[RMDB]
RNA sequence: GGGAACGACUCGAGUAGAGUCGAAAACUUCGCGGGGCCUGUCUACGCCACCGCGGCGCUUUUCUAUGAUCCGCUGCCGCUUUCCGAGCGAGUGUCAUGGCGGCCGGCGUCGAGUUGGCAGGAGUAACCCUCCUCAAGUAUUCGUACUUGAGGAGGGAAAAGAAACAACAACAACAAC
Reactivity to DMS in 0.01 (KOAc 150mM, MgCl2 10mM, bicine 150mM(pH8.5), 24C), signal-to-noise 2, nucleotides 027 to 126: c060u000u000c050g030c030g000g010g000g020c030c060u030g010u010c070u010a100c160g010c020c010a070c050c030g000c020g020g010c060g000c080u000u000u010u020c090u010a050u010g000a060u010c050c030g030c050u000g010c090c020g040c120u000u000u000c090c050g010a110g020c030g010a070g020u030g010u000c070a080u000g000g000c070g010g010c160c080g000g000c080g000u000c050g010a060g030u000u010g010g000c020a090g010g020a150g030u030a090a170
Reactivity to 2A3 in 0.01 (KOAc 150mM, MgCl2 10mM, bicine 150mM(pH8.5), 24C), signal-to-noise 1, nucleotides 027 to 126: c000u060u060c020g020c040g060g060g000g000c070c000u050g000u090c040u050a030c020g020c020c010a120c040c020g000c000g020g000c010g050c020u160u300u260u070c050u080a120u130g030a050u030c010c050g000c020u110g180c090c020g090c090u090u060u080c080c080g020a050g050c040g040a120g070u150g060u070c050a080u120g080g040c000g030g020c020c030g000g020c000g020u060c000g040a090g090u110u090g020g000c050a040g010g060a040g020u030a080a090
This 177-nucleotide RNA was probed chemically with DMS and 2A3. The RNA was probed in 150 mM KOAc, 10 mM MgCl2 and 150 mM bicine (pH 8.5) at 24 C. For 2A3, 713 sequencing reads were counted.